[RMDB]
RNA sequence: GGGAACGACUCGAGUAGAGUCGAAAAAGACUUUAGACCUACUGAACAGCCUUUACUGGCCUCUAGUUCCAUCCUUACAGCUGCCUUCUGAAGGAGGCAGAACAGAUGUUAGCCUCUCAGGUUACACAAAAUGAGAUGCAAGUGUAGGGCAGUUCAAUCAGCAUAGUAGUUUCGACUACUAUGCUGAAAAAGAAACAACAACAACAAC
Reactivity to 2A3 in 0.01 (KOAc 150mM, MgCl2 10mM, bicine 150mM(pH8.5), 24C), signal-to-noise 4, nucleotides 027 to 156: a010g120a030c040u150u140u100a030g030a080c010c020u020a030c050u070g030a040a010c000a040g010c000c000u110u120u120a130c150u130g030g010c020c030u040c030u020a070g030u090u000c020c000a020u050c000c020u080u110a100c040a040g010c000u010g010c000c000u040u030c020u130g110a260a080g040g000a000g020g000c010a000g010a010a020c020a020g090a080u110g030u130u080a030g010c000c010u050c020u030c060a060g060g040u050u080a060c070a010c000a080a120a050a080u110g010a040g000a020u090g040c030a080a110g020u030g030u070a020g010g010g000c010a050g010u030u010c000a010a060
Reactivity to DMS in 0.01 (KOAc 150mM, MgCl2 10mM, bicine 150mM(pH8.5), 24C), signal-to-noise 2, nucleotides 027 to 156: a050g020a090c060u000u000u010a070g000a110c020c000u030a200c030u010g000a060a060c020a110g010c010c040u000u000u000a060c040u000g000g010c010c060u000c010u010a080g020u000u010c020c010a060u000c010c060u000u000a100c130a140g010c020u000g010c020c000u010u000c040u000g020a200a200g040g000a020g020g010c010a010g030a010a150c220a140g020a120u010g000u000u000a110g020c050c020u010c080u030c110a050g020g030u000u000a080c060a080c130a050a050a090a150u000g000a110g000a100u000g010c020a050a120g020u000g020u000a050g000g020g030c070a100g000u000u000c040a090a300